RNA sequence: GGGAACGACUCGAGUAGAGUCGAAAAUAGGCUAGCCAUCGCCUUGAAAUCUCUCCUAUUGGUUAGAGGAUCGAUGGUCACCCCAAAUAGGAUAGCGAGGGAAGCACGCUUGAGGCUGAACCGCGAAAUAGUAUCAAGCUCACCAUGACGAAGCCUGCAGCUCUCUGUACUUCGGUACAGAGAGCUGAAAAGAAACAACAACAACAAC
Reactivity to 2A3 in 0.01 (KOAc 150mM, MgCl2 10mM, bicine 150mM(pH8.5), 24C), signal-to-noise 1, nucleotides 027 to 156: u110a010g030g000c010u000a010g000c000c000a040u010c030g000c020c000u000u070g060a160a080a020u060c040u060c080u100c030c030u060a060u050u030g030g030u160u160a110g010a150g140g000a080u300c040g030a050u050g020g030u020c010a120c000c000c000c040a000a030a020u050a000g000g040a010u000a040g000c010g040a300g060g020g020a000a000g050c020a060c030g100c060u070u170g000a080g050g000c010u000g010a040a020c000c000g000c000g020a020a020a020u080a010g040u000a030u090c000a030a030g040c020u050c060a110c050c080a120u030g080a040c040g030a070a050g000c010c000u010g010

Source: RMDB library RSTRND, as collected in RNAgym. An RNA of 207 nucleotides, treated with 2A3 and read out base by base.